Chemical mapping of a 207-nucleotide RNA with 2A3.
Values cover nucleotides 27 to 156.
Source: RMDB library RSTRND, as collected in RNAgym.
The 2A3 profile rests on 837 reads.
[RMDB]
RNA sequence: GGGAACGACUCGAGUAGAGUCGAAAAUGAGUGAACGCGGCAACUGAUAAACGCAACCGACACGGAUGCAACGGUGACCGACGCCGAGAUCGAGGCCUUCUUUGCUGAAGAGGCUGCCGCUCUCGUCUGAAGGAACCAGCCUGGCUCAGCGUGCUGCCCACCUUAUGGGGUUCGCCCCAUAAGGUGGAAAAGAAACAACAACAACAAC
Reactivity to 2A3 in 0.01 (KOAc 150mM, MgCl2 10mM, bicine 150mM(pH8.5), 24C), signal-to-noise 2, nucleotides 027 to 156: u200g000a070g080u090g060a120a000c070g010c050g040g000c000a070a040c030u010g060a090u230a090a060a030c100g010c110a120a010c010c020g110a210c110a050c300g040g000a030u110g020c010a040a090c030g000g000u030g030a080c020c020g010a010c010g030c030c010g000a000g000a070u020c010g010a040g000g040c040c020u130u070c010u100u120u130g200c140u180g080a020a020g000a000g000g050c060u100g150c160c000g000c020u010c000u000c000g000u010c030u090g050a080a010g010g000a020a020c040c000a000g020c000c050u120g020g000c000u010c020a000g000c070g120u080g000c010u030g000c000